[RMDB]
RNA sequence: GGGAACGACUCGAGUAGAGUCGAAAAGUAGCGUUCUUCGGAACGCUACAAGAUCCGUGCUUCGGCACGGAUCACCACUACUACGGUAGUGGAGACUAGAGCGUGAGCUCUAGUCAACGUCUAUCUACGGAUAGACGACUCACCGCGUGAGCGGUGAGAAGUGCGUCUACGGACGCACAUUAGCUCGCCAGUUAGCGAGGUCUGUCUCGACACGACAGAUAAUCGGGUGCAACUCCCGCCCCUCUUCCGAGGGUCAUCGGAACCAUACCAUGGCGUUCGCGCCAUGGAAAAGAAACAACAACAACAAC
Reactivity to 2A3 in 0.01 (KOAc 150mM, MgCl2 10mM, bicine 150mM(pH8.5), 24C), signal-to-noise 6, nucleotides 027 to 266: g000u000a000g000c000g000u000u010c010u030u040c190g060g000a000a000c000g000c000u000a000c000a000a000g000a000u000c000c000g000u000g010c000u080u130c270g150g000c000a000c000g000g000a000u000c000a000c000c000a000c000u010a000c000u010a010c190g140g000u010a000g000u010g000g020a130g000a020c000u000a000g000a000g000c010g010u050g040a020g000c000u000c000u000a000g000u000c000a010a010c010g000u000c000u000a010u000c000u010a030c260g110g000a010u000a000g000a000c000g010a010c000u000c000a000c000c000g000c010g030u050g060a040g000c000g010g010u000g000a000g000a010a010g000u000g000c000g000u000c010u020a040c300g120g000a000c000g020c000a000c000a000u010u040a020g030c000u000c010g000c020c030a170g200u180u130a010g040c010g000a000g010g010u010c010u000g000u000c010u030c100g140a110c050a050c270g010a000c000a000g010a010u030a030a070u070c010g000g000g000u010g010c000a010a000c020u010c010c000c000g010c010c000c000c000u150c080u030u000c010c000g010a000g010g010g020u030c020a000u010c000g000g010a000a000c020c010a070u130a140
Reactivity to DMS in 0.01 (KOAc 150mM, MgCl2 10mM, bicine 150mM(pH8.5), 24C), signal-to-noise 2, nucleotides 027 to 266: g000u010a000g020c000g040u010u010c010u000u040c130g020g010a030a010c000g010c000u000a010c010a120a100g010a010u000c000c000g000u000g000c000u000u010c140g040g000c170a000c010g000g040a000u000c000a180c040c000a010c010u000a000c000u010a070c200g060g030u000a000g000u000g000g000a120g020a000c030u000a000g030a020g000c000g000u000g000a120g020c000u000c000u000a010g000u000c040a090a300c040g020u000c010u000a000u000c000u000a100c110g020g000a000u000a000g010a000c000g000a070c000u020c020a020c000c000g020c000g000u000g020a060g030c000g010g010u010g000a000g060a110a150g010u000g000c000g010u000c000u000a160c210g020g020a030c000g000c000a000c010a030u020u060a200g000c000u000c000g050c020c000a190g000u000u010a010g000c010g000a020g000g010u010c000u000g010u000c010u000c170g020a130c170a150c300g000a000c020a000g010a020u000a000a050u000c000g030g000g000u000g000c040a090a300c000u000c020c010c010g030c040c000c000c060u000c200u000u000c030c000g010a000g000g000g000u020c010a020u000c000g000g010a050a020c300c140a090u000a160